[RMDB]
RNA sequence: GGGAACGACUCGAGUAGAGUCGAAAAGAUAUGGAUCCCGAAGAACGUGAACUACAUCCUGUAUCGGAAACGAUACUGGAUGCACGGGAGGGAUCCUAAGUCAAACGCGAUGGUUCGCCAUCGCGAACCUAGGUCUUGCGUUCGCGCAAGACCUAGGAAAAGAAACAACAACAACAAC
Reactivity to DMS in 0.01 (KOAc 150mM, MgCl2 10mM, bicine 150mM(pH8.5), 24C), signal-to-noise 1, nucleotides 027 to 126: g000a120u000a300u000g000g040a000u020c000c000c000g040a140a220g000a080a290c080g000u000g020a070a020c040u000a300c020a000u000c000c000u020g000u000a000u010c000g040g000a150a050a120c010g000a000u000a010c000u000g000g020a000u020g000c000a000c050g010g000g000a070g000g000g010a000u000c010c000u000a000a060g010u030c030a070a090a300c020g000c000g000a040u000g010g010u000u000c190g020c050c010a090u000c010g000c010g000a010a040
Reactivity to 2A3 in 0.01 (KOAc 150mM, MgCl2 10mM, bicine 150mM(pH8.5), 24C), signal-to-noise 1, nucleotides 027 to 126: g070a010u060a060u250g010g020a030u020c000c020c050g050a190a030g060a130a020c010g020u000g040a080a130c130u110a040c300a010u000c010c000u020g020u000a000u000c000g000g030a090a040a080c000g010a000u020a000c010u000g010g000a000u020g060c010a000c010g010g000g010a090g000g000g020a010u000c000c000u000a050a010g060u000c020a060a090a090c000g000c010g020a000u010g000g100u030u090c300g140c140c000a010u020c000g000c000g000a000a000
An RNA of 177 nucleotides, treated with DMS and 2A3 and read out base by base. 2A3 adducts were read by reverse transcription with SuperScript II with manganese. The reactions ran in a buffer of 150 mM KOAc, 10 mM MgCl2 and 150 mM bicine (pH 8.5), at 24 C. DMS adducts were read by reverse transcription with MarathonRT.